[RMDB]
RNA sequence: GGGAACGACUCGAGUAGAGUCGAAAAGUAUGAUCCUUCGGGAUCAUACAAAUAAACUCGCCUAUAGCCAGGCGAGAACCAAAGGGGCUAAAGCAAUGGAAAAAAUCGGAUACUUCGGUAUCCGAAACAAGCAUGAUAUGUUCGCAUAUCAUGCUUGAAAAGAAACAACAACAACAAC
Reactivity to 2A3 in 0.01 (KOAc 150mM, MgCl2 10mM, bicine 150mM(pH8.5), 24C), signal-to-noise 2, nucleotides 027 to 126: g010u010a010u010g000a000u010c020c000u030u050c210g050g000g000a000u010c000a010u000a000c000a000a030a000u060a020a020a010c010u000c000g010c000c010u140a120u080a140g040c030c030a010g010g010c000g000a010g090a010a000c000c000a030a000a000g200g020g010g000c030u090a090a010a050g030c040a060a130u140g090g090a140a100a030a030a010a060u040c010g000g000a010u000a010c010u030u050c200g080g010u000a000u000c010c000g000a000a000a000
Reactivity to DMS in 0.01 (KOAc 150mM, MgCl2 10mM, bicine 150mM(pH8.5), 24C), signal-to-noise 3, nucleotides 027 to 126: g000u000a000u010g000a010u000c000c000u000u030c220g050g000g010a000u000c000a010u000a010c000a030a080a040u010a080a080a220c030u000c010g030c000c010u000a120u010a080g010c120c110a140g010g020c000g010a000g000a050a120c030c050a040a040a030g010g010g000g010c090u010a050a110a100g020c130a060a070u010g010g020a000a040a070a050a100a120u000c010g000g000a010u000a000c000u000u010c170g020g000u000a000u000c000c000g000a000a020a050